[RMDB]
RNA sequence: GGGAACGACUCGAGUAGAGUCGAAAAGGGGUCUAUGGAGCAACGGUAGCUCGAAGGGCGUGCUGAAGCCUCCACGGCACGCUGUUGACGAGCGAACGUUGCGUUGAAAUAGACGGAGGCACCCAAAGUUGAGAUGCGAUUCGUCGCAUCUCAACAAGUUACAGGAGCGUUUCGACGCUCCUGUAACAAAAGAAACAACAACAACAAC
Reactivity to 2A3 in 0.01 (KOAc 150mM, MgCl2 10mM, bicine 150mM(pH8.5), 24C), signal-to-noise 2, nucleotides 027 to 156: g080g010g060g010u000c030u040a000u010g020g000a020g000c000a020a010c040g060g080u170a030g000c030u000c050g130a140a160g300g040g000c000g000u050g000c010u060g030a080a020g000c000c010u000c010c000a000c010g010g030c000a000c020g000c030u020g090u120u210g170a080c120g000a000g000c020g040a090a010c000g000u000u000g030c000g000u010u000g000a000a000a000u000a000g000a000c030g000g010a000g010g000c010a050c000c000c000a060a130a070g000u000u010g000a000g000a000u000g000c000g020a010u030u090c290g010u020c000g100c030a000u010c000u000c000a000a000c000a000a020
An RNA of 207 nucleotides, treated with 2A3 and read out base by base. For 2A3 the reverse transcriptase was SuperScript II with manganese. For 2A3, 1,573 sequencing reads were counted. The reactions ran in a buffer of 150 mM KOAc, 10 mM MgCl2 and 150 mM bicine (pH 8.5), at 24 C. Reactivities are given for positions 27 through 156. It was measured as part of the RMDB library RNAMAK.